[RMDB]
An RNA of 177 nucleotides, treated with DMS and 2A3 and read out base by base. It was measured as part of the RMDB library M2PK90. In probing experiments dimethyl sulfate is read out at A N1 and C N3, which are open when not base-paired. The DMS profile rests on 4,443 reads. DMS adducts were read by reverse transcription with MarathonRT. The reactions ran in a buffer of 150 mM KOAc, 10 mM MgCl2 and 150 mM bicine (pH 8.5), at 24 C.

RNA sequence: GGGAACGACUCGAGUAGAGUCGAAAACAUCAGGAGGACCUUCCGCGCACUUCCAAGCAGGAGCUUUCCUUCCAAGCGCACUUCCAAUCUACUCGAGAGGAGGACGAGGAGGAGGAUUCCCACAAAACUUAUCCUGUAUGUUCGCAUACAGGAUAAGAAAAGAAACAACAACAACAAC
Reactivity to DMS in 0.01 (KOAc 150mM, MgCl2 10mM, bicine 150mM(pH8.5), 24C), signal-to-noise 5, nucleotides 027 to 126: c090a100u010c120a100g010g010a070g000g000a070c300c030u000u000c040c050g020c060g000c070a080c070u000u010c080c080a100a090g020c030a080g020g000a040g010c110u000u000u000c010c010u000u010c040c050a090a100g000c050g010c080a100c060u000u000c020c030a120a190u000c010u000a030c080u000c030g000a020g000a270g000g000a050g010g010a110c060g000a080g000g000a110g000g010a060g000g000a130u000u000c010c010c010a110c240a060a050a080a110
Reactivity to 2A3 in 0.01 (KOAc 150mM, MgCl2 10mM, bicine 150mM(pH8.5), 24C), signal-to-noise 6, nucleotides 027 to 126: c020a060u140c060a020g000g040a020g020g020a060c000c010u090u020c040c020g050c020g020c050a080c090u180u040c060c010a070a040g010c020a040g020g060a020g020c050u080u120u060c000c000u080u010c030c010a080a040g080c030g020c050a060c030u040u000c020c010a030a070u020c020u050a060c030u050c070g020a030g000a030g050g040a040g000g020a030c050g010a050g030g020a030g020g010a020g020g010a100u040u000c020c020c000a040c020a010a090a010a000